The record gives the reactivity of an RNA of 177 nucleotides to DMS and 2A3. 2A3 is a SHAPE reagent: it acylates the 2'-hydroxyl of flexible nucleotides of all four kinds. For 2A3, 2,387 sequencing reads were counted. For 2A3 the reverse transcriptase was SuperScript II with manganese.

RNA sequence: GGGAACGACUCGAGUAGAGUCGAAAAGCUCGGAGACGAGCAAGGCUGACAAAACGCUGUCCCCACCUCCACGUGGUGUCGGCUGGAUAAUGCUGCAUUAUGUUGCAUUUAUCAACAGGGAAGGAAACAGUACCAGCACUUUCGAGUGCUGGUACUGAAAAGAAACAACAACAACAAC
Reactivity to DMS in 0.01 (KOAc 150mM, MgCl2 10mM, bicine 150mM(pH8.5), 24C), signal-to-noise 2, nucleotides 027 to 126: g000c000u000c000g030g000a300g010a190c040g000a010g050c000a110a080g000g000c000u030g000a050c060a080a020a060a080c160g000c110u000g000u000c060c010c000c000a100c020c000u020c060c000a300c070g000u000g020g000u040g000u000c030g000g020c050u000g010g000a030u030a000a000u000g000c030u000g010c000a120u100u050a110u060g000u000u000g000c000a040u070u000u010a030u000c020a140a100c150a180g000g020g000a100a080g000g020a100a050a220
Reactivity to 2A3 in 0.01 (KOAc 150mM, MgCl2 10mM, bicine 150mM(pH8.5), 24C), signal-to-noise 4, nucleotides 027 to 126: g000c000u000c000g040g000a100g020a060c010g000a000g020c010a000a030g040g000c010u030g020a040c020a060a070a040a010c110g060c060u060g040u060c010c000c010c000a040c000c020u050c010c020a110c070g040u110g030g000u030g000u060c000g010g020c000u030g060g000a000u000a000a000u020g040c030u020g000c000a070u100u110a110u300g060u070u000g000c000a010u090u100u050a020u000c020a020a070c000a050g000g090g020a120a030g080g050a030a070a020